[RMDB]
RNA sequence: GGGAACGACUCGAGUAGAGUCGAAAAUAACAGACAAUGCCACAACAGCUAGCAACGCGCAGUGAGCUCAGGAUUAAGGACAGGCAGGCGGCGGCAGCUCCUGGCCGCUUCUGACGUAUACGUCAAAGUCGAGUCUGUUGUUCGCGGCAGAUUCGACAAAAGAAACAACAACAACAAC
Reactivity to 2A3 in 0.01 (KOAc 150mM, MgCl2 10mM, bicine 150mM(pH8.5), 24C), signal-to-noise 9, nucleotides 027 to 126: u100a020a020c020a010g120a030c050a070a120u130g030c020c020a060c020a130a050c020a040g030c010u070a020g020c030a060a060c050g020c010g000c050a040g020u030g100a020g000c020u020c040a030g040g020a040u110u120a090a060g060g010a020c020a010g020g040c010a010g020g010c020g020g000c000g010g000c010a020g010c010u040c010c010u020g040g000c000c010g000c000u050u010c030u020g000a000c010g020u070a050u050a180c060g010u010c020a050a020a000
Reactivity to DMS in 0.01 (KOAc 150mM, MgCl2 10mM, bicine 150mM(pH8.5), 24C), signal-to-noise 9, nucleotides 027 to 126: u030a090a100c130a070g000a080c110a070a080u020g010c010c020a060c100a080a100c110a080g010c040u010a080g010c040a070a070c100g000c070g020c040a060g010u010g000a080g010c030u000c050a050g000g000a070u020u030a070a080g000g000a070c070a040g000g010c050a050g010g010c060g000g010c030g000g000c030a060g000c050u000c020c020u000g000g000c020c020g000c050u010u020c070u010g010a020c030g020u020a080u010a060c080g010u000c020a050a070a120
An RNA of 177 nucleotides, treated with 2A3 and DMS and read out base by base. The reactions ran in a buffer of 150 mM KOAc, 10 mM MgCl2 and 150 mM bicine (pH 8.5), at 24 C.